Source: RMDB library OK3TST, as collected in RNAgym.
Chemical mapping of a 207-nucleotide RNA with 2A3 and DMS.
The DMS profile rests on 3,234 reads.
RNA sequence: GGGAACGACUCGAGUAGAGUCGAAAACUCUAAUCAGAAGCUGGAAACAGACAUUUUGAGGGAGGAGCAAAGGAAACAGAAAUUUAUGUUGAGCAGGGUAGCUGAAUAUAUAUAUUCAAUAAGCUAUAGGGGAAGCCAUGAAUAUUUGUGAAAGGAGCUAAUAGUCUAAGUUCGCUUAGACUAUUAGAAAAGAAACAACAACAACAAC
Reactivity to 2A3 in 0.01 (KOAc 150mM, MgCl2 10mM, bicine 150mM(pH8.5), 24C), signal-to-noise 4, nucleotides 027 to 156: c020u010c030u070a100a080u080c030a040g050a180a020g030c040u050g020g030a040a070a030c020a020g140a100c050a110u110u130u050u090g050a050g010g000g010a010g000g010a040g000c030a050a030a010g020g040a070a060a010c030a020g140a050a130a040u160u190u090a090u090g030u040u020g010a020g000c020a010g030g040g010u030a010g010c000u010g010a040a000u040a000u010a000u020a010u010a030u130u020c020a050a050u080a180a020g000c000u030a030u180a140g020g000g010g030a020a000g000c000c020a020u050g000a000a010u090a070u110u110u110g030u010g040a070a090a050g040g020a020g040
Reactivity to DMS in 0.01 (KOAc 150mM, MgCl2 10mM, bicine 150mM(pH8.5), 24C), signal-to-noise 2, nucleotides 027 to 156: c030u000c030u010a070a090u010c040a160g000a130a110g020c040u010g000g000a120a090a140c050a100g010a140c050a130u000u000u010u000g000a080g000g000g000a090g020g000a070g040c030a050a040a080g030g020a060a100a130c050a090g010a050a050a140u000u000u010a030u000g000u000u020g010a090g010c040a060g010g000g060u010a050g020c000u000g000a040a060u010a080u020a090u020a100u010a060u010u000c010a080a130u020a060a110g010c010u000a060u010a130g010g020g000g030a060a150g020c030c040a090u010g000a060a040u000a040u000u000u000g010u000g000a070a010a100g030g010a130g030